An RNA of 177 nucleotides, treated with 2A3 and DMS and read out base by base. 2A3 adducts were read by reverse transcription with SuperScript II with manganese. DMS adducts were read by reverse transcription with MarathonRT. The 2A3 profile rests on 22,845 reads.
RNA sequence: GGGAACGACUCGAGUAGAGUCGAAAACUUGCAUCCGAUGGCGUGCUGAUAGAUGGAUUUCAGGUUUGCCCGCACCACCGUUCGCAGCGGUGUGGCUGCCGUAAGCCGAGACCGGGUCUGGUCCUCGCUACCUAGACUAGUUCGCUAGUCUAGGUAGAAAAGAAACAACAACAACAAC
Reactivity to 2A3 in 0.01 (KOAc 150mM, MgCl2 10mM, bicine 150mM(pH8.5), 24C), signal-to-noise 8, nucleotides 027 to 126: c020u020u080g010c010a040u020c020c020g120a120u120g060g010c050g020u070g010c050u080g040a130u100a170g110a080u120g080g020a070u050u100u090c060a060g030g030u060u100u070g040c010c010c000g000c000a030c010c010a010c000c010g130u240u100c100g000c110a040g000c020g030g000u010g020u040g040g000c030u020g010c020c040g030u040a030a020g010c000c010g020a030g010a040c030c000g040g000g050u020c040u080g030g020u030c010c020u020c010g030
Reactivity to DMS in 0.01 (KOAc 150mM, MgCl2 10mM, bicine 150mM(pH8.5), 24C), signal-to-noise 9, nucleotides 027 to 126: c050u000u000g010c300a060u000c030c040g010a100u000g010g020c070g020u010g010c050u000g010a110u000a070g010a090u010g010g000a070u000u000u000c050a100g020g010u000u010u000g000c030c030c110g000c040a070c070c010a020c010c010g000u000u000c300g010c180a180g000c010g000g010u000g010u000g000g010c030u000g010c070c130g000u000a040a060g010c020c010g000a080g010a060c050c020g010g010g010u000c050u000g020g000u000c020c010u000c150g000

Notes:
The RNA was probed in 150 mM KOAc, 10 mM MgCl2 and 150 mM bicine (pH 8.5) at 24 C.